Chemical mapping of a 207-nucleotide RNA with 2A3 and DMS. For 2A3 the reverse transcriptase was SuperScript II with manganese. Conditions: 150 mM KOAc, 10 mM MgCl2 and 150 mM bicine (pH 8.5), 24 C. The data come from the RNA Mapping Database (RMDB), library OK3TST. For DMS, 4,399 sequencing reads were counted. DMS adducts were read by reverse transcription with MarathonRT.
[RMDB]
RNA sequence: GGGAACGACUCGAGUAGAGUCGAAAAGUGUAUAGGCAAGCCGACCCUCCGCCUAUACACGAAUUAAGGAGGGCGGAGAUCUUAUGCUCGCGAUCUUACGUCACGAGCGACGGCCUGCGGCUCGUGACGUAUCUUACGCAGGCCAUAGCGAGCUACAAAUAGUGCAUGGAUUCGUCCAUGCACUAUUAAAAGAAACAACAACAACAAC
Reactivity to 2A3 in 0.01 (KOAc 150mM, MgCl2 10mM, bicine 150mM(pH8.5), 24C), signal-to-noise 2, nucleotides 027 to 156: g020u000g000u000a010u010a000g000g040c070a060a070g050c040c040g130a300c030c010c010u000c070c030g000c000c000u000a000u000a000c000a000c000g020a020a030u160u070a050a010g060g000a010g000g020g020c000g040g010a040g010a030u010c010u150u160a130u240g000c020u030c030g000c000g040a020u020c010u030u100a020c000g000u000c010a000c010g020a030g020c080g080a050c050g010g010c000c010u030g000c010g080g000c010u000c010g000u000g000a000c000g000u010a010u030c020u020u060a020c040g020c030a000g030g060c010c000a010u040a000g020c000g000a010g020c020u130a100c050a020
Reactivity to DMS in 0.01 (KOAc 150mM, MgCl2 10mM, bicine 150mM(pH8.5), 24C), signal-to-noise 2, nucleotides 027 to 156: g020u000g020u000a000u000a020g000g020c060a060a090g000c040c000g000a190c030c020c020u010c110c020g000c010c000u000a040u000a030c000a050c020g000a050a080u000u000a180a110g000g000a090g000g010g030c050g020g000a120g010a150u000c070u000u000a100u000g010c030u000c010g030c030g010a070u000c030u000u000a040c060g020u010c010a030c000g000a040g040c030g040a030c050g040g010c080c040u000g030c050g040g000c010u000c000g060u000g000a020c000g000u000a010u000c030u010u000a080c030g030c020a050g040g000c050c030a100u010a090g030c030g000a070g020c030u000a100c110a100